[RMDB]
RNA sequence: GGGAACGACUCGAGUAGAGUCGAAAAGACGUCACAGCCAGCAUUAUCAACUUUCACCUUAGGCAAAACAGAAUUCGUGAAGCCAGAGAAGCCAUCGAGCUCCUAUGUUACUACUAUGAGGAAGAAAUAGCCCUCGCUUGGGCUAGAUCACACCAUAACAGAUACCUUACUUCGGUAAGGUAUCUGUAAAAGAAACAACAACAACAAC
Reactivity to 2A3 in 0.01 (KOAc 150mM, MgCl2 10mM, bicine 150mM(pH8.5), 24C), signal-to-noise 3, nucleotides 027 to 156: g010a010c020g030u060c020a010c020a060g040c040c010a010g010c030a070u030u040a080u220c040a070a090c090u060u120u070c100a090c040c030u090u100a070g000g080c000a090a080a030a070c040a050g130a170a160u150u130c050g010u070g080a050a000g020c010c000a020g020a020g000a070a020g020c030c000a080u080c050g040a050g050c010u030c010c020u090a070u160g060u100u070a050c020u010a020c000u020a030u110g040a070g090g040a060a100g000a000a110a000u010a000g030c000c000c030u050c020g150c140u110u110g000g000g010c010u000a000g000a000u030c000a020c020a020c080c000a040u080a080
Reactivity to DMS in 0.01 (KOAc 150mM, MgCl2 10mM, bicine 150mM(pH8.5), 24C), signal-to-noise 1, nucleotides 027 to 156: g000a100c120g010u010c000a050c070a140g000c010c030a100g050c010a180u000u000a130u000c030a010a120c050u000u000u010c010a050c030c050u000u000a170g030g040c030a050a120a090a250c010a120g000a050a220u000u000c060g030u010g000a120a170g030c010c030a140g020a230g000a090a040g040c050c030a080u000c080g000a130g020c030u000c000c020u010a060u010g010u000u010a030c050u000a090c050u000a080u010g010a080g000g000a090a020g010a060a110a190u000a020g040c020c000c000u000c230g020c270u000u000g020g040g030c000u010a010g000a120u000c070a090c060a090c030c030a050u010a210
This 207-nucleotide RNA was probed chemically with 2A3 and DMS. Reactivities are rounded to 0.1 and cut off at 0 and 3. The DMS profile rests on 1,690 reads. The data come from the RNA Mapping Database (RMDB), library OK3TST. For DMS the reverse transcriptase was MarathonRT. The reactions ran in a buffer of 150 mM KOAc, 10 mM MgCl2 and 150 mM bicine (pH 8.5), at 24 C. 2A3 adducts were read by reverse transcription with SuperScript II with manganese.